[RMDB]
RNA sequence: GGGAACGACUCGAGUAGAGUCGAAAAUCCCAAAGGUUCGUGAAUCCGAAAGGUACGGAGGAACCGCUUUUUGGGGUUAAUCUGCAGUGAAGCUGCAGUAGGGAUACCUUCUGUCCCGCACCCGACAGCUAACUCCGGAGUGAAUAAAGGAAGGAGACCAUGAGUAGCAUUUCGAUGCUACUCAUGGAAAAGAAACAACAACAACAAC
Reactivity to DMS in 0.01 (KOAc 150mM, MgCl2 10mM, bicine 150mM(pH8.5), 24C), signal-to-noise 2, nucleotides 027 to 156: u000c010c020c020a070a080a080g020g000u000u000c010g000u000g020a240a210u000c040c050g020a140a130a200g010g000u000a070c010g010g000a040g070g010a120a180c060c020g000c050u020u010u000u010u040g040g020g000g000u020u010a060a140u010c020u000g000c060a030g000u000g000a090a180g010c000u000g020c020a030g000u010a030g000g020g030a030u000a030c020c090u000u000c020u000g010u010c190c030c010g030c160a100c020c000c000g000a060c060a020g020c000u030a080a220c060u010c020c020g020g010a150g000u010g000a160a070u000a080a050a140g000g000a050a090g000g040a300g010a250
Reactivity to 2A3 in 0.01 (KOAc 150mM, MgCl2 10mM, bicine 150mM(pH8.5), 24C), signal-to-noise 2, nucleotides 027 to 156: u020c000c000c010a060a100a030g110g000u100u070c050g060u080g120a100a020u070c010c030g040a050a010a100g090g000u050a030c020g000g000a000g040g010a060a110c120c040g040c000u100u160u020u060u150g050g000g000g000u000u020a030a030u080c000u000g000c010a000g000u040g180a160a020g080c000u000g030c030a000g000u010a000g000g000g000a000u090a120c030c000u040u030c000u050g000u000c000c000c020g010c020a010c000c000c010g030a090c090a020g010c020u040a060a030c010u000c000c000g000g050a070g010u160g050a070a130u120a100a060a010g040g010a000a000g010g000a020g040a020